[RMDB]
RNA sequence: GGGAACGACUCGAGUAGAGUCGAAAACAGCGGAGCCAUGGGAUGCUCCUCCCGAUUCCGUCCAUCCCUCCCCCCAAGAGGGUCGCCCAGGAAUGGCGGGACCCCACUCAGCUGGGUGCCGCGUUCCGACAAAUAUUUACUUCGGUAAAUAUUUGUCAAAAGAAACAACAACAACAAC
Reactivity to 2A3 in 0.01 (KOAc 150mM, MgCl2 10mM, bicine 150mM(pH8.5), 24C), signal-to-noise 2, nucleotides 027 to 126: c030a010g050c070g010g000a020g030c050c030a230u180g020g000g030a020u110g050c020u030c000c000u010c020c000c000g020a030u120u000c050c030g040u020c030c000a080u080c000c000c020u020c010c010c000c010c000c000a040a000g060a060g010g000g020u000c000g030c000c000c010a000g030g020a010a010u040g260g000c020g000g000g020a000c000c010c030c000a050c020u300c060a060g040c120u090g000g020g020u060g130c010c000g010c000g000u000u010c000c010
Reactivity to DMS in 0.01 (KOAc 150mM, MgCl2 10mM, bicine 150mM(pH8.5), 24C), signal-to-noise 3, nucleotides 027 to 126: c210a180g010c070g000g020a040g010c060c110a130u020g030g030g010a110u000g000c070u000c090c030u000c000c010c010g020a120u000u000c060c040g010u010c030c060a080u000c000c010c000u000c020c000c010c010c010c040a100a090g000a090g010g000g020u000c010g010c010c000c020a170g000g000a020a010u000g000g030c010g010g000g000a040c030c010c020c060a050c080u010c190a090g010c130u010g010g000g010u000g010c000c010g010c010g010u000u000c010c000

An RNA of 177 nucleotides, treated with 2A3 and DMS and read out base by base.
For DMS the reverse transcriptase was MarathonRT.
The RNA was probed in 150 mM KOAc, 10 mM MgCl2 and 150 mM bicine (pH 8.5) at 24 C.
For 2A3, 3,336 sequencing reads were counted.
Source: RMDB library VIROID, as collected in RNAgym.